[RMDB]
RNA sequence: GGGAACGACUCGAGUAGAGUCGAAAACGACCCGAAGAGGAAAGAAGGACUCGGACGCGAACCCGUAAGGUGAAACUUUCACAUUUAUUGGGGAGUACACUCGAGGAGUGGAAGGCGGGGAGACGGGCAACCUUAGCGUUCGCGCUAAGGAAAAGAAACAACAACAACAAC
Reactivity to 2A3 in 0.01 (KOAc 150mM, MgCl2 10mM, bicine 150mM(pH8.5), 24C), signal-to-noise 9, nucleotides 027 to 129: c040g060a030c010c000c010g010a040a020g050a010g020g040a050a060a040g050a030a030g020g010a010c010u010c050g010g010a020c030g010c020g050a050a050c020c000c000g020u040a020a050g040g010u040g060a050a060a070c040u110u160u060c050a060c030a170u070u080u160a110u150u280g010g000g000g000a000g010u050a030c030a020c030u030c010g050a050g030g010a020g020u070g030g020a010a020g020g020c000g020g000g000g000a010g010a000c010g000g000g000c010a040a040
Reactivity to DMS in 0.01 (KOAc 150mM, MgCl2 10mM, bicine 150mM(pH8.5), 24C), signal-to-noise 9, nucleotides 027 to 129: c170g000a190c050c030c020g030a060a060g000a050g010g020a020a020a020g000a040a020g000g000a070c070u010c080g000g000a080c120g000c050g020a110a150c030c000c030g000u030a040a050g010g020u020g030a030a080a160c220u000u020u010c020a000c030a080u040u020u010a080u050u080g030g000g000g020a120g010u040a100c140a010c060u000c000g000a060g000g000a040g000u040g000g050a040a050g010g010c020g020g000g010g010a040g020a050c110g000g000g020c150a040a050

Notes: The record gives the reactivity of an RNA of 170 nucleotides to 2A3 and DMS. For 2A3 the reverse transcriptase was SuperScript II with manganese. Source: RMDB library 15KLIB, as collected in RNAgym. Conditions: 150 mM KOAc, 10 mM MgCl2 and 150 mM bicine (pH 8.5), 24 C. As a SHAPE reagent, 2A3 marks flexible, mostly unpaired nucleotides at the ribose 2'-OH.